[RMDB]
RNA sequence: GGGAACGACUCGAGUAGAGUCGAAAAGCGUACUACCACCGGAUAAGGUAAGCAACAGCUUAAUAUUGGAGUCUUCCCAAAUAGGAAGACUCAGGUUAAGACAUGCUUACCGUAACGGUGGUAUCGCAAAACCUUCCCCCUGUUCGCAGGGGGAAGGCCAUUACAUUACCUUCGGGUAAUGUAAUGGAAAAGAAACAACAACAACAAC
Reactivity to DMS in 0.01 (KOAc 150mM, MgCl2 10mM, bicine 150mM(pH8.5), 24C), signal-to-noise 3, nucleotides 027 to 156: g020c010g000u010a000c090u000a010c000c010a030c000c010g000g000a160u000a130a170g020g000u000a010a000g010c000a050a110c090a190g010c000u000u010a000a030u000a130u000u000g060g010a030g000u000c000u000u000c000c000c010a050a180a240u010a060g000g010a030a000g000a020c010u000c000a000g000g020u000u000a020a030g000a050c050a300u000g010c010u010u000a010c010c000g000u000a050a220c000g010g050u000g020g000u000a000u000c010g030c020a110a070a110a250c000c010u000u010c000c010c000c010c000u000g010u000u010c290g030c040a050g020g010g010g000g020a000a010g020g010
Reactivity to 2A3 in 0.01 (KOAc 150mM, MgCl2 10mM, bicine 150mM(pH8.5), 24C), signal-to-noise 8, nucleotides 027 to 156: g010c010g050u090a080c040u010a000c010c000a000c000c000g010g000a000u000a020a010g000g010u010a000a000g010c010a010a120c040a160g060c010u030u030a030a020u170a300u180u240g260g010a000g000u000c000u010u000c000c010c030a140a190a120u300a070g000g000a010a000g000a000c000u000c000a010g010g000u000u000a000a000g020a080c030a120u060g000c000u000u010a000c000c000g000u000a010a000c000g000g000u010g000g000u000a000u000c000g030c000a020a030a010a020c000c000u000u000c010c000c000c000c010u000g040u040u080c260g020c100a000g000g000g000g000g000a000a000g000g000
Conditions: 150 mM KOAc, 10 mM MgCl2 and 150 mM bicine (pH 8.5), 24 C. The record gives the reactivity of an RNA of 207 nucleotides to DMS and 2A3. The 2A3 profile rests on 12,949 reads. Values cover nucleotides 27 to 156.